[RMDB]
Description: An RNA of 177 nucleotides, treated with 2A3 and DMS and read out base by base. Conditions: 150 mM KOAc, 10 mM MgCl2 and 150 mM bicine (pH 8.5), 24 C.
RNA sequence: GGGAACGACUCGAGUAGAGUCGAAAAGGAAAGCGCUGCGCGUGUAGUGCGCCGACUGGCGGCCGUUGCGGGGCUUGAAACGCGGGUAGCGCGCACGCCCGGCGAAGAAGUUCGCAUACGCGGUGUGGGCGCUACAUAAGUUCGCUUAUGUAGCGCCAAAAGAAACAACAACAACAAC
Reactivity to 2A3 in 0.01 (KOAc 150mM, MgCl2 10mM, bicine 150mM(pH8.5), 24C), signal-to-noise 3, nucleotides 027 to 126: g070g010a160a090a020g000c040g020c010u010g000c160g010c000g040u050g030u090a140g080u060g090c040g040c000c000g060a100c080u110g050g020c020g050g020c050c040g020u030u050g050c070g010g050g050g010c000u070u110g040a130a140a000c010g010c020g060g070g020u040a020g010c010g000c000g000c010a000c000g000c000c000c000g010g020c030g000a020a000g040a040a010g110u050u040c020g000c020a040u070a230c050g010c090g010g000u020g000u020g070
Reactivity to DMS in 0.01 (KOAc 150mM, MgCl2 10mM, bicine 150mM(pH8.5), 24C), signal-to-noise 5, nucleotides 027 to 126: g020g000a090a080a150g000c010g010c020u000g010c040g000c010g020u010g010u010a130g030u010g020c010g020c020c010g010a120c150u000g010g020c040g000g000c040c030g010u010u010g030c050g010g020g000g010c010u000u010g000a080a090a070c060g010c020g010g010g030u000a050g030c030g010c020g000c010a020c050g010c000c010c010g010g010c000g010a040a040g020a120a080g010u000u000c020g000c010a080u010a300c070g020c070g030g010u000g010u000g010